[RMDB]
RNA sequence: GGGAACGACUCGAGUAGAGUCGAAAAUGGGAAGCGGGCUGGAGAGAGGAGAGAAGCCAUCGAGCCACAUGGACCCCUACAGCCCGGAAUCUGAGCUGUGGUAGGAUUGGCUGCGAUUGGGAUUGGCUACGCCUCCGUAGUUCGCUACGGAGGCGUAAAAAGAAACAACAACAACAAC
Reactivity to DMS in 0.01 (KOAc 150mM, MgCl2 10mM, bicine 150mM(pH8.5), 24C), signal-to-noise 1, nucleotides 027 to 126: u010g010g000g000a150a080g030c030g000g000g000c150u000g000g020a100g010a130g000a080g000g010a130g020a110g000a120a100g000c000c020a020u000c020g010a070g040c000c050a080c300a090u000g010g020a150c070c010c110c010u000a040c000a000g020c000c060c000g010g000a160a060u000c090u000g000a070g010c010u000g000u000g000g000u000a070g000g000a110u020u000g010g000c020u000g020c020g000a120u000u020g000g010g000a160u030u010g010g000c070
Record summary: This 177-nucleotide RNA was probed chemically with DMS. The reactions ran in a buffer of 150 mM KOAc, 10 mM MgCl2 and 150 mM bicine (pH 8.5), at 24 C. It was measured as part of the RMDB library OK2TRN. The DMS profile rests on 941 reads. DMS adducts were read by reverse transcription with MarathonRT.